About this RNA: Structure probing data (DMS and 2A3) for a 177-nucleotide construct. For DMS the reverse transcriptase was MarathonRT. The RNA was probed in 150 mM KOAc, 10 mM MgCl2 and 150 mM bicine (pH 8.5) at 24 C. For 2A3 the reverse transcriptase was SuperScript II with manganese.

[RMDB]
RNA sequence: GGGAACGACUCGAGUAGAGUCGAAAAUCGGCACGCACAUCGCGACGGCCAAUGGUUUCGGGAACCCCAGUACAGGCAGGCUGGGACUUCCCUCUUUAACACCAGGCCCACCCCGCUCACAGCGACGAAAAGGGCGUUAAUUCGUUAACGCCCUUUUAAAAGAAACAACAACAACAAC
Reactivity to DMS in 0.01 (KOAc 150mM, MgCl2 10mM, bicine 150mM(pH8.5), 24C), signal-to-noise 4, nucleotides 027 to 126: u000c060g010g020c040a070c040g020c050a070c090a050u000c080g030c030g020a080c160g010g020c020c030a070a080u030g020g000u000u010u030c170g020g000g010a030a060c140c000c000c010a010g010u030a130c050a080g000g000c110a030g000g000c000u000g000g010g020a060c280u000u000c000c000c000u020c070u010u030u010a100a080c160a090c010c040a060g000g000c000c000c050a120c050c010c000c010g010c050u020c050a090c080a070g010c060g000a120c150g000
Reactivity to 2A3 in 0.01 (KOAc 150mM, MgCl2 10mM, bicine 150mM(pH8.5), 24C), signal-to-noise 4, nucleotides 027 to 126: u060c010g020g000c020a000c030g060c000a040c010a120u090c050g010c020g070a070c040g010g010c010c000a010a040u120g020g000u080u160u250c110g010g000g010a010a020c000c010c000c000a000g020u100a180c030a030g050g190c070a070g050g000c000u000g010g020g000a020c010u020u020c000c060c000u050c030u020u080u050a060a030c040a000c020c020a000g000g030c000c000c000a050c000c030c000c000g040c010u020c000a070c010a010g080c020g090a070c030g010